[RMDB]
RNA sequence: GGGAACGACUCGAGUAGAGUCGAAAAGAAGGAUAGUUCGCUAUCCUUCAAACCCACCGAAAGGCAAAUGUGUUAGAUGCCCUCUAUCACAUAAACCGGGCAAAACAGUACCGUUCGCGGUACUGAAGUGCAAAGUAGUGUUCGCACUACUUUGCACAAAAGAAACAACAACAACAAC
Reactivity to DMS in 0.01 (KOAc 150mM, MgCl2 10mM, bicine 150mM(pH8.5), 24C), signal-to-noise 2, nucleotides 027 to 126: g000a000a010g020g010a010u000a000g000u000u010c300g040c000u000a020u000c020c000u000u000c000a000a130a090c000c000c010a180c210c190g020a030a020a020g010g000c020a080a300a000u000g000u000g000u000u020a000g000a030u020g000c300c260c060u000c000u010a000u000c010a000c010a020u000a030a210a110c010c000g050g000g020c120a130a110a100a140c010a000g000u000a000c000c020g070u000u010c140g060c000g010g010u020a000c000u000g000a010a080
Reactivity to 2A3 in 0.01 (KOAc 150mM, MgCl2 10mM, bicine 150mM(pH8.5), 24C), signal-to-noise 1, nucleotides 027 to 126: g010a010a020g000g000a000u000a000g000u000u030c050g000c130u010a000u000c000c030u010u000c000a000a000a030c020c000c010a020c000c050g210a160a080a010g050g000c060a100a080a060u000g010u000g000u010u010a010g010a020u280g050c000c020c000u030c000u000a010u010c000a010c010a020u040a010a050a020c020c000g000g050g000c100a120a100a030a000c010a010g000u000a010c020c000g000u010u080c290g010c010g110g000u010a000c000u000g000a020a020